[RMDB]
RNA sequence: GGGAACGACUCGAGUAGAGUCGAAAAUUCAACUUUUUAAAUGAUUAUAGGACUAAGAGGGGAUGCAAAAACAGAUAAGAAUCUGAAUAAAAGCACUAUCUGUCAAAGAAACAACAUUUGUGUAAUAAUCAAGAAACCGUUUAGAGCACCCCCUGGAUAGCACGUCACCUUUCGAGGUGACGUGCUAAAAAGAAACAACAACAACAAC
Reactivity to 2A3 in 0.01 (KOAc 150mM, MgCl2 10mM, bicine 150mM(pH8.5), 24C), signal-to-noise 1, nucleotides 027 to 115: u040u010c000a020a030c020u070u000u000u070u100a030a070a040u020g000a000u020u040a020u070a100g020g020a010c020u020a020a020g020a000g000g020g000g000a000u030g000c010a000a010a010a050a000c010a000g000a000u030a060a000g090a020a060u020c000u000g010a010a000u040a030a040a000a010g010c010a020c020u030a020u030c010u020g020u040c030a000a000a000g000a000a000a000c000a000a000c000a000

Source: RMDB library OK3TST, as collected in RNAgym. The record gives the reactivity of an RNA of 207 nucleotides to 2A3. 2A3 adducts were read by reverse transcription with SuperScript II with manganese. The RNA was probed in 150 mM KOAc, 10 mM MgCl2 and 150 mM bicine (pH 8.5) at 24 C.